Source: RMDB library OK2TRN, as collected in RNAgym. An RNA of 177 nucleotides, treated with DMS and read out base by base. For DMS, 666 sequencing reads were counted. Reactivities are rounded to 0.1 and cut off at 0 and 3.

RNA sequence: GGGAACGACUCGAGUAGAGUCGAAAAGAGGAUUCAACGAGCUUCGUAGCAACGAUAGCAACGUAGCUUUUGCUACGACCCGAGCUAUCGAGGGUAGCUACGUCCCCUGCUCGAGGGCAGAAUCCGAAUGACCCACGCAUUUCGAUGCGUGGGUCAUAAAAGAAACAACAACAACAAC
Reactivity to DMS in 0.01 (KOAc 150mM, MgCl2 10mM, bicine 150mM(pH8.5), 24C), signal-to-noise 1, nucleotides 027 to 126: g000a290g000g030a060u010u000c010a210a230c050g000a010g000c000u020u000c000g020u000a000g050c020a170a180c050g010a050u000a000g000c000a070a200c030g020u000a000g000c010u000u000u020u000g020c000u000a000c030g000a130c130c130c120g000a080g020c000u010a000u000c020g000a050g000g010g090u000a130g000c030u000a000c010g040u020c110c000c030c170u000g020c000u020c010g000a080g040g000g000c110a100g000a000a050u000c000c030g000a230